[RMDB]
RNA sequence: GGGAACGACUCGAGUAGAGUCGAAAAUGAGCCAGCAUUUUAUCUAAACCCCACUUUGUUUGUGUAAAUAGAGUGUGGAAUCUUGACUUUUGUGGGUGAGGAGGGUAGCAGAAAGUCAGUGGCAUGCCCACAGGGAACAUUUCGAUGUUCCCUGUGGAAAAGAAACAACAACAACAAC
Reactivity to DMS in 0.01 (KOAc 150mM, MgCl2 10mM, bicine 150mM(pH8.5), 24C), signal-to-noise 3, nucleotides 027 to 126: u000g010a160g000c030c060a090g010c040a030u000u000u000u010a070u020c090u020a070a130a180c090c010c010c000a020c010u000u000u000g020u000u000u000g030u030g040u010a010a010a020u000a010g020a020g030u000g000u000g010g000a140a070u000c070u000u000g020a060c120u010u000u010u010g020u000g020g010g000u000g010a140g000g000a120g010g000g010u000a060g000c090a080g010a050a050a060g010u000c050a020g020u000g010g010c060a090u010g000c170
Reactivity to 2A3 in 0.01 (KOAc 150mM, MgCl2 10mM, bicine 150mM(pH8.5), 24C), signal-to-noise 3, nucleotides 027 to 126: u050g000a000g050c020c000a020g060c010a100u040u020u090u180a080u080c060u090a050a130a140c010c000c000c000a010c000u000u010u010g090u060u050u060g230u050g110u220a000a040a000u060a030g030a000g020u030g010u100g040g010a050a050u050c070u050u130g030a050c020u080u070u080u050g070u090g030g020g060u090g020a060g080g040a050g020g040g000u020a010g030c000a010g050a050a030a000g030u030c030a010g020u030g000g000c020a010u060g030c020